[RMDB]
About this RNA: The data come from the RNA Mapping Database (RMDB), library OK3TST. Chemical mapping of a 207-nucleotide RNA with DMS and 2A3. For 2A3, 6,017 sequencing reads were counted.

RNA sequence: GGGAACGACUCGAGUAGAGUCGAAAAGCUGCUCGCCGCCGAUGCCGUACGCGCGCUGCGCGAGGAGCUGCUGCCUCAUGUGGACCUGAUCACACCCAACCUGCCCGAGGCGGCGGAUCUGCUGGGGGAGGUCGAGAGCACCGACACGGCCGGCAUGCUUAUGAAUUAUAUUCGUAUAAUUCAUAAGAAAAGAAACAACAACAACAAC
Reactivity to DMS in 0.01 (KOAc 150mM, MgCl2 10mM, bicine 150mM(pH8.5), 24C), signal-to-noise 3, nucleotides 027 to 156: g010c000u000g030c010u000c050g050c020c030g040c020c030g000a090u010g020c020c030g040u010a110c060g020c040g020c070g040c060u000g010c050g000c010g000a080g020g010a070g000c020u000g030c120u000g010c020c030u000c030a110u000g040u000g010g010a100c070c060u010g010a130u010c050a170c070a110c020c010c010a080a110c020c030u000g000c040c020c030g010a150g020g020c030g010g020c000g010g010a020u000c010u010g030c020u000g020g020g040g010g010a140g020g030u010c030g020a080g030a110g010c010a100c040c000g020a100c050a070c030g020g000c010c030g040g020c020a120u010g010
Reactivity to 2A3 in 0.01 (KOAc 150mM, MgCl2 10mM, bicine 150mM(pH8.5), 24C), signal-to-noise 6, nucleotides 027 to 156: g020c020u090g020c010u030c030g060c070c030g010c020c010g090a120u130g010c020c010g070u140a080c060g030c010g000c030g060c170u200g010c030g000c010g020a030g020g040a010g000c000u020g000c020u020g010c010c000u040c030a080u140g070u160g130g050a100c010c060u070g060a120u150c040a020c020a050c110c020c000a050a090c040c020u090g030c010c010c010g080a080g040g050c050g000g000c010g000g010a100u070c070u140g020c040u060g040g020g010g000g030a060g020g030u020c030g020a030g000a010g100c030a010c040c010g030a020c020a010c060g030g000c010c010g010g000c030a040u110g020